Structure probing data (DMS) for a 177-nucleotide construct. In probing experiments dimethyl sulfate is read out at A N1 and C N3, which are open when not base-paired.
[RMDB]
RNA sequence: GGGAACGACUCGAGUAGAGUCGAAAAAAUGCCCAUACGCGACGAGAAUAUGGAACGCUUUUGAGAUUGAGGAUUUCGGAGUUGGUGUGUUCCACACGUCAGUGUGGUUGAAGAUCAACGAGAAAAAUAAUGGUCCGUGAUUCGUCACGGACCAUUAAAAAGAAACAACAACAACAAC
Reactivity to DMS in 0.01 (KOAc 150mM, MgCl2 10mM, bicine 150mM(pH8.5), 24C), signal-to-noise 1, nucleotides 027 to 126: a040a030u010g060c030c020c000a090u030a030c010g040c060g000a010c080g030a030g030a160a050u000a060u010g030g010a060a060c090g050c100u000u000u000u010g000a090g010a090u000u030g000a090g060g030a150u000u000u000c040g000g010a090g020u000u000g000g000u000g000u010g000u000u000c000c000a030c070a040c000g020u030c300a080g030u000g020u000g000g020u020u000g020a060a110g000a060u010c060a000a010c040g020a300g010a040a050a080a100a150
Values cover nucleotides 27 to 126.
The RNA was probed in 150 mM KOAc, 10 mM MgCl2 and 150 mM bicine (pH 8.5) at 24 C.
The DMS profile rests on 892 reads.
The data come from the RNA Mapping Database (RMDB), library OK2TST.